[RMDB]
The record gives the reactivity of an RNA of 207 nucleotides to DMS. For DMS, 2,333 sequencing reads were counted.

RNA sequence: GGGAACGACUCGAGUAGAGUCGAAAAUUGAAAUUGAGCCGUCCUGUUAUCGAAAGAUAGGCAGAAGAUACGAAAUGUGUGACAGCAUGGGAAGUAAAGGCAGACCGUGGUUCCCUUGAGUAUCUUAAUUAGGGGGACGAGUUCGCUCGUCCCCCAAUCAUUGUAACGGGUUCGCCCGUUACAAUGAAAAAGAAACAACAACAACAAC
Reactivity to DMS in 0.01 (KOAc 150mM, MgCl2 10mM, bicine 150mM(pH8.5), 24C), signal-to-noise 1, nucleotides 027 to 156: u000u010g010a030a080a110u000u000g000a080g000c030c000g020u030c020c020u000g000u000u000a070u000c030g000a070a120a150g010a060u000a080g030g000c050a070g000a070a050g000a090u000a080c050g010a130a050a070u010g000u010g000u000g010a210c150a160g000c070a030u010g000g010g010a090a070g020u000a030a040a080g020g000c030a140g000a140c050c020g020u000g030g000u010u000c010c000c000u000u000g040a210g020u000a090u000c060u000u020a060a160u000u010a180g010g020g000g030g060a020c010g020a020g000u000u000c160g010c000u000c000g000u000c010c000c000c000c030a000a010